This 177-nucleotide RNA was probed chemically with 2A3 and DMS.
Conditions: 150 mM KOAc, 10 mM MgCl2 and 150 mM bicine (pH 8.5), 24 C.
Source: RMDB library TTRDES, as collected in RNAgym.
RNA sequence: GGGAACGACUCGAGUAGAGUCGAAAAGAUAUGGAUAUGAAGAGCUCGAUAAGUCCCAAUCGGAAACGAUUGAAGGACUUUUGACGAGUGAGUCAUAUCCUAAGUCAAACUGUCCUUCGGGACAGAAGCAUAUAUCUUCGUUCGCGAAGAUAUAUGCAAAAGAAACAACAACAACAAC
Reactivity to 2A3 in 0.01 (KOAc 150mM, MgCl2 10mM, bicine 150mM(pH8.5), 24C), signal-to-noise 2, nucleotides 027 to 126: g010a000u080a050u140g000g000a000u000a000u040g000a050a220g090a040g260c020u020c040g130a190u070a230a020g000u000c030c010c000a000a010u020c010g020g030a110a030a070c010g010a000u000u040g060a110a130g000g000a040c000u030u040u080u110g180a090c040g000a000g020u070g010a030g180u000c000a000u010a010u030c030c000u000a100a010g020u000c050a050a030a150c020u020g010u010c010c000u000u090c300g130g010g000a000c010a000g000a020a000
Reactivity to DMS in 0.01 (KOAc 150mM, MgCl2 10mM, bicine 150mM(pH8.5), 24C), signal-to-noise 3, nucleotides 027 to 126: g010a070u020a300u000g000g000a000u000a010u000g000a050a100g040a300g020c000u000c000g020a190u000a020a020g000u000c000c000c010a030a000u010c000g000g000a180a050a200c000g000a000u000u000g010a110a150g020g000a020c000u000u000u000u000g000a230c120g000a020g000u010g000a200g010u010c020a000u000a020u000c000c000u000a020a090g000u010c060a060a100a240c010u000g000u010c000c000u010u040c240g030g000g020a000c010a010g010a070a050
Annotation
For DMS the reverse transcriptase was MarathonRT. The 2A3 profile rests on 4,604 reads. 2A3 adducts were read by reverse transcription with SuperScript II with manganese.